[RMDB]
RNA sequence: GGGAACGACUCGAGUAGAGUCGAAAACUUCGAUUCCAAGUCGACGGUUACUGCUUCCGUUUCAGCUGUCUCUUGGAACGAAAAAAUAAAUCAGGUUUCUUUGGGGUCGGCUGAUGGCAACGCAUAACAUAAUAUCCCGCUUCGGCGGGAUAUUAUGAAAAGAAACAACAACAACAAC
Reactivity to DMS in 0.01 (KOAc 150mM, MgCl2 10mM, bicine 150mM(pH8.5), 24C), signal-to-noise 1, nucleotides 027 to 126: c090u000u000c010g000a120u000u000c010c010a060a060g000u000c240g010a000c040g000g020u010u000a090c170u000g000c090u000u010c110c090g010u000u000u000c070a080g000c000u000g000u000c000u000c010u000u000g000g020a000a010c020g000a040a000a100a080a110a080u020a040a050a080u000c100a160g000g000u000u010u000c000u000u000u000g000g020g000g010u010c040g030g000c010u010g010a040u010g000g010c160a070a050c080g030c060a040u010a050a160
An RNA of 177 nucleotides, treated with DMS and read out base by base.
It was measured as part of the RMDB library OK2TST.
The RNA was probed in 150 mM KOAc, 10 mM MgCl2 and 150 mM bicine (pH 8.5) at 24 C.
Reactivities are given for positions 27 through 126.